About this RNA: The record gives the reactivity of an RNA of 177 nucleotides to 2A3 and DMS. The 2A3 profile rests on 2,352 reads. 2A3 adducts were read by reverse transcription with SuperScript II with manganese. The RNA was probed in 150 mM KOAc, 10 mM MgCl2 and 150 mM bicine (pH 8.5) at 24 C.
RNA sequence: GGGAACGACUCGAGUAGAGUCGAAAAGAUAUGGAGCUGAAAGCCUUUUGACGCUCCAUCGGAAACGAUCGGAGCGAUAAGGCUAGGCUCCUAAGUCAAAACGGCGAGAGCUUCGGCUCUCGCCGAACGGAGUUAUUACGUUCGCGUAAUAACUCCGAAAAGAAACAACAACAACAAC
Reactivity to 2A3 in 0.01 (KOAc 150mM, MgCl2 10mM, bicine 150mM(pH8.5), 24C), signal-to-noise 2, nucleotides 027 to 126: g030a010u050a040u090g010g020a010g010c040u090g080a300a210a010g020c060c030u080u160u190u280g190a090c040g000c010u000c030c010a000u020c010g000g030a050a030a020c000g000a010u060c210g000g010a010g000c020g010a070u080a110a020g000g030c000u000a020g000g020c020u000c000c000u000a020a000g000u000c000a000a050a110a110c020g000g020c010g000a010g000a000g040c000u070u110c300g180g000c010u000c000u000c000g020c000c000g000a000a000
Reactivity to DMS in 0.01 (KOAc 150mM, MgCl2 10mM, bicine 150mM(pH8.5), 24C), signal-to-noise 2, nucleotides 027 to 126: g000a040u000a300u000g000g000a000g010c010u010g000a120a140a060g010c010c020u000u000u020u000g010a230c060g030c000u000c000c000a030u000c000g030g010a060a090a130c000g040a000u000c200g040g010a020g030c000g000a050u000a030a030g020g000c010u000a230g000g000c020u000c000c000u000a000a070g000u000c030a080a070a140a170c020g000g000c000g010a020g020a030g030c050u000u000c220g030g000c000u000c000u000c000g020c000c000g000a010a000